RNA sequence: GGGAACGACUCGAGUAGAGUCGAAAAAUUGUGAAAAGACAUAGAGGGUGUAGCAUAAGUGGGAGCGAAAGCGCCAGUGAAAUACCACUACCUUUAUCGUCUUUUUACUUAUUCAAUGAAGCGAAGCGUAAUGGCCUACGUUCGCGUAGGCCAUUACAAAAGAAACAACAACAACAAC
Reactivity to DMS in 0.01 (KOAc 150mM, MgCl2 10mM, bicine 150mM(pH8.5), 24C), signal-to-noise 1, nucleotides 027 to 126: a070u010u010g020u000g000a010a000a000a000g000a020c010a050u000a010g000a030g030g000g000u010g020u000a040g000c160a040u000a030a040g000u000g000g000g000a010g030c000g000a070a060a120g000c000g000c280c300a130g010u000g000a010a020a130u030a030c000c000a000c000u000a030c000c000u000u010u000a000u010c150g010u000c000u040u000u000u010u000a010c000u000u000a050u020u010c100a070a060u030g000a130a090g020c140g000a090a130g020c270
Notes
Chemical mapping of a 177-nucleotide RNA with DMS. For DMS, 905 sequencing reads were counted. It was measured as part of the RMDB library RFMREP. Reactivities are given for positions 27 through 126. Conditions: 150 mM KOAc, 10 mM MgCl2 and 150 mM bicine (pH 8.5), 24 C.